[RMDB]
RNA sequence: GGGAACGACUCGAGUAGAGUCGAAAACUGUCAACAAGAUCUUCAUGGAAUGAGGACGGAAUAUACUGUCCACUAGCAGGCAGCUCUUAAGGACCACAUUCCUGAAAAUCAAAUAGAAAGCCAGGAUUUAGUAGGAAAAUAAGGAAGAGUGCAGGUGAUAUGACGACAAAUUCGUUUGUCGUCAUAUAAAAGAAACAACAACAACAAC
Reactivity to DMS in 0.01 (KOAc 150mM, MgCl2 10mM, bicine 150mM(pH8.5), 24C), signal-to-noise 3, nucleotides 027 to 156: c050u010g000u000c030a090a120c030a070a160g010a030u000c020u000u000c030a090u020g030g050a060a080u000g010a100g060g010a300c030g000g020a150a110u000a130u010a080c000u030g020u020c010c020a150c120u000a080g000c100a140g020g020c020a020g020c020u000c150u010u020a110a080g010g020a170c010c030a120c040a070u000u000c000c010u000g000a020a020a020a070u000c020a020a080a120u010a110g010a080a030a080g010c040c010a080g010g010a090u000u000u000a030g040u000a060g010g010a050a020a040a050u000a060a050g000g000a020a020g000a050g030u000g010c040a040g020g030u000g000
Reactivity to 2A3 in 0.01 (KOAc 150mM, MgCl2 10mM, bicine 150mM(pH8.5), 24C), signal-to-noise 4, nucleotides 027 to 156: c020u060g060u160c030a000a020c020a090a070g010a060u020c030u050u020c050a060u250g010g000a030a010u050g010a050g010g030a030c040g030g080a120a020u170a020u050a140c030u030g000u010c020c020a090c090u050a030g040c070a050g060g000c000a010g010c010u030c010u130u130a100a100g030g050a060c000c010a020c020a050u010u010c000c000u010g010a030a020a010a030u040c020a000a060a050u140a050g110a050a050a000g010c020c020a010g000g020a000u040u040u000a030g010u020a020g060g040a060a090a060a090u110a040a030g050g010a020a020g070a000g030u040g000c000a000g000g030u020g010
The record gives the reactivity of an RNA of 207 nucleotides to DMS and 2A3. For DMS, 6,449 sequencing reads were counted. Values cover nucleotides 27 to 156.